[RMDB]
RNA sequence: GGGAACGACUCGAGUAGAGUCGAAAAAUGGUGCCUACUACAUAGGAAGCGCCUCAUAAACCGUGCCUAUCCUUAGCCAUCUCAUUCUUUUUUCGAAGUUGCAAAAUAUUUCACUGUAAGAUACUACCUUCUAUGACUACUUCGGUAGUCAUAGAAGAAAAGAAACAACAACAACAAC
Reactivity to DMS in 0.01 (KOAc 150mM, MgCl2 10mM, bicine 150mM(pH8.5), 24C), signal-to-noise 3, nucleotides 027 to 126: a080u000g010g040u010g010c000c030u010a300c040u000a100c240a180u010a020g010g010a190a270g010c060g030c060c020u000c150a060u020a040a160a080c030c020g010u010g020c000c020u000a080u000c010c040u000u000a060g020c020c030a060u010c020u000c050a080u020u000c010u000u000u000u000u030u000c120g010a000a060g000u010u000g010c150a060a050a090a100u000a050u000u000u000c030a080c050u000g010u000a070a070g010a090u030a090c090u000a100c150
Reactivity to 2A3 in 0.01 (KOAc 150mM, MgCl2 10mM, bicine 150mM(pH8.5), 24C), signal-to-noise 2, nucleotides 027 to 126: a010u090g000g000u030g000c010c010u000a050c020u050a040c040a240u280a040g020g000a060a000g060c020g010c050c010u060c030a060u210a040a090a030c030c010g020u040g040c020c000u140a120u110c020c010u020u040a020g050c010c000a070u040c050u010c030a060u110u060c000u030u120u050u020u070u030c030g050a070a020g050u090u060g040c050a010a010a100a060u140a140u080u070u030c030a030c060u080g050u120a040a020g040a100u110a140c010u050a040c010
This 177-nucleotide RNA was probed chemically with DMS and 2A3. The DMS profile rests on 1,737 reads. The data come from the RNA Mapping Database (RMDB), library OK2TRN.